RNA sequence: GGGAACGACUCGAGUAGAGUCGAAAAGUAGAACAUUCCCAGUCUCAAUUCAAAUAUCAUUUUAACAUUGUCUAUAACAGAGACAAUUAAAGUUUUAACAUGUAAGCUAUCGUAAACAUCAUUCAAUGCUCUUACUUCAAUUCGUUGAAGUAAGAGCAAAAGAAACAACAACAACAAC
Reactivity to 2A3 in 0.01 (KOAc 150mM, MgCl2 10mM, bicine 150mM(pH8.5), 24C), signal-to-noise 3, nucleotides 027 to 126: g120u140a040g020a110a000c000a060u010u000c000c000c000a000g010u000c070u030c050a240a300u280u100c060a070a030a130u220a070u170c030a110u020u070u070u190a020a020c030a010u000u000g000u000c030u040a080u080a150a080c090a080g120a010g000a080c000a010a000u040u060a010a000a030g020u090u000u000u050a080a000c120a060u070g100u150a050a080g040c010u050a050u210c040g020u020a000a020a020c030a030u090c000a050u000u050c000a070a010u010
Reactivity to DMS in 0.01 (KOAc 150mM, MgCl2 10mM, bicine 150mM(pH8.5), 24C), signal-to-noise 2, nucleotides 027 to 126: g010u020a060g000a060a100c110a110u000u000c000c000c000a230g040u010c050u000c110a100a100u000u000c120a070a110a100u010a070u030c030a070u000u000u060u000a050a070c110a050u000u000g010u000c000u000a010u010a140a090c300a210g000a060g000a020c000a050a040u000u000a040a050a070g000u010u000u000u000a020a150c070a010u000g020u000a020a080g040c080u000a000u000c110g050u010a000a020a050c090a100u020c050a150u000u000c080a040a230u020

Chemical mapping of a 177-nucleotide RNA with 2A3 and DMS.
High 2A3 reactivity points to a flexible backbone, as in loops and unpaired stretches.
Conditions: 150 mM KOAc, 10 mM MgCl2 and 150 mM bicine (pH 8.5), 24 C.
The data come from the RNA Mapping Database (RMDB), libraries RFM100 and RFMREP.